The record gives the reactivity of an RNA of 207 nucleotides to 2A3 and DMS. The RNA was probed in 150 mM KOAc, 10 mM MgCl2 and 150 mM bicine (pH 8.5) at 24 C. The DMS profile rests on 1,710 reads. Source: RMDB library OK3TST, as collected in RNAgym.
[RMDB]
RNA sequence: GGGAACGACUCGAGUAGAGUCGAAAACAUGAAUGGGUUAAGGGAAGCUGAGUAGUUGGCCAGGUUCACCCCGAGACAAUUAACUUCUUCCUACACAGCAGCCUUGCAGCUUAUGAUAACAGUUCUUGCUUAGGUAAAUCACACACUGUUAAUAUUACCUACCAGCAUACUUCGGUAUGCUGGUAGGAAAAGAAACAACAACAACAAC
Reactivity to 2A3 in 0.01 (KOAc 150mM, MgCl2 10mM, bicine 150mM(pH8.5), 24C), signal-to-noise 3, nucleotides 027 to 156: c070a060u140g100a090a050u110g020g000g060u100u110a130a080g040g000g030a030a010g000c130u110g020a020g050u040a000g000u040u010g040g000c040c020a040g000g040u080u140c020a070c000c040c000c010g030a040g020a070c020a040a040u050u040a040a040c010u020u010c000u020u020c020c010u060a040c120a000c000a050g170c020a010g000c000c030u020u090g020c010a020g000c020u140u080a100u190g110a050u050a120a050c030a040g020u060u040c030u100u190g040c030u090u060a060g000g040u090a010a110a140u200c070a010c020a010c000a010c120u020g050u110u060a070a040u100a170u200u130a050
Reactivity to DMS in 0.01 (KOAc 150mM, MgCl2 10mM, bicine 150mM(pH8.5), 24C), signal-to-noise 1, nucleotides 027 to 156: c050a080u010g010a150a060u010g020g030g000u000u010a090a170g000g050g010a060a050g050c130u010g010a130g000u000a090g130u000u010g010g030c010c030a090g010g000u000u010c100a150c170c000c000c000g030a260g030a030c010a060a040u000u000a010a120c050u010u000c030u000u000c000c000u000a130c170a120c040a050g010c060a070g000c010c010u000u030g000c070a040g010c030u000u000a090u000g010a200u010a050a070c070a060g010u010u000c040u000u000g020c010u000u000a110g030g010u000a030a070a130u000c060a070c120a070c100a080c060u000g000u000u000a020a080u010a110u000u000a090